[RMDB]
Structure probing data (DMS and 2A3) for a 177-nucleotide construct. Source: RMDB library M2PK50, as collected in RNAgym. Conditions: 150 mM KOAc, 10 mM MgCl2 and 150 mM bicine (pH 8.5), 24 C. The 2A3 profile rests on 11,595 reads. The DMS profile rests on 9,272 reads.
RNA sequence: GGGAACGACUCGAGUAGAGUCGAAAACCGCACUUCUUCGGAAGUGCGGAAAUACGGAGAUUGUACCUCGGUAGAAGUACAUAACCCUUGGAAACAAGGGAAAAAGCGUGAGCUUCGGCUCACGCAACAACCAUAAGAUGUUCGCAUCUUAUGGUUGAAAAGAAACAACAACAACAAC
Reactivity to DMS in 0.01 (KOAc 150mM, MgCl2 10mM, bicine 150mM(pH8.5), 24C), signal-to-noise 5, nucleotides 027 to 126: c000c000g010c000a010c000u000u000c000u000u000c190g030g010a000a010g010u000g010c000g020g000a010a020a060u000a120c100g000g000a100g000a120u000u000g010u000a030c020c010u000c000g020g050u010a070g000a050a030g010u000a010c020a020u000a100a170c000c000c000u000u000g000g010a180a090a190c000a010a010g000g010g010a010a040a060a110a060g010c000g010u000g000a010g010c000u000u010c200g030g000c000u000c000a000c000g020c000a020a040
Reactivity to 2A3 in 0.01 (KOAc 150mM, MgCl2 10mM, bicine 150mM(pH8.5), 24C), signal-to-noise 4, nucleotides 027 to 126: c000c000g000c000a010c000u010u000c010u040u060c110g140g010a010a000g010u000g010c010g010g010a030a020a000u160a020c050g090g020a060g020a100u050u060g010u020a020c000c020u010c020g040g000u120a080g030a170a020g030u020a020c010a020u060a080a130c000c000c000u000u000g010g000a040a050a020c000a010a010g000g040g000a050a040a000a010a000g010c000g000u000g000a000g000c020u030u070c220g060g000c000u000c000a000c000g010c010a000a000